Annotation: This 177-nucleotide RNA was probed chemically with 2A3 and DMS. The data come from the RNA Mapping Database (RMDB), library M2PK50. Conditions: 150 mM KOAc, 10 mM MgCl2 and 150 mM bicine (pH 8.5), 24 C. For DMS the reverse transcriptase was MarathonRT. For 2A3 the reverse transcriptase was SuperScript II with manganese. The DMS profile rests on 7,498 reads.
RNA sequence: GGGAACGACUCGAGUAGAGUCGAAAAGGGUAGAUCUUCGGAUCUACCCAAAAGGAGCAUCCAACGAAGGAAGUGCUAGCAUAAGCGUGCAGGCUAGCACUAAAAGGUUCCGCUUCGGCGGAACCAACAUAAUUGAACAGUUCGCUGUUCAAUUAUGAAAAGAAACAACAACAACAAC
Reactivity to 2A3 in 0.01 (KOAc 150mM, MgCl2 10mM, bicine 150mM(pH8.5), 24C), signal-to-noise 2, nucleotides 027 to 126: g000g000g020u010a000g000a000u010c030u040u070c250g020g010a000u000c000u010a000c010c000c000a000a000a010a000g020g000a040g040c020a040u020c010c000a040a070c110g110a100a040g130g050a080a010g010u000g000c000u010a000g000c000a040u070a300a050g090c070g130u120g040c070a010g120g000c000u010a010g000c000a000c000u000a000a010a000a020g000g010u000u000c000c010g010c010u050u040c200g090g010c010g000g000a000a000c000c000a010a000
Reactivity to DMS in 0.01 (KOAc 150mM, MgCl2 10mM, bicine 150mM(pH8.5), 24C), signal-to-noise 5, nucleotides 027 to 126: g000g010g010u000a000g000a000u000c000u000u010c190g040g010a020u000c000u000a000c000c000c000a010a000a040a050g010g010a100g010c060a080u000c030c040a110a100c150g010a130a110g000g000a130a030g010u000g020c000u000a010g000c000a080u010a080a090g020c090g020u000g030c090a160g000g000c010u000a000g010c010a000c000u000a010a040a080a110g010g000u000u000c000c000g000c000u000u010c200g030g020c010g000g010a010a000c000c000a020a050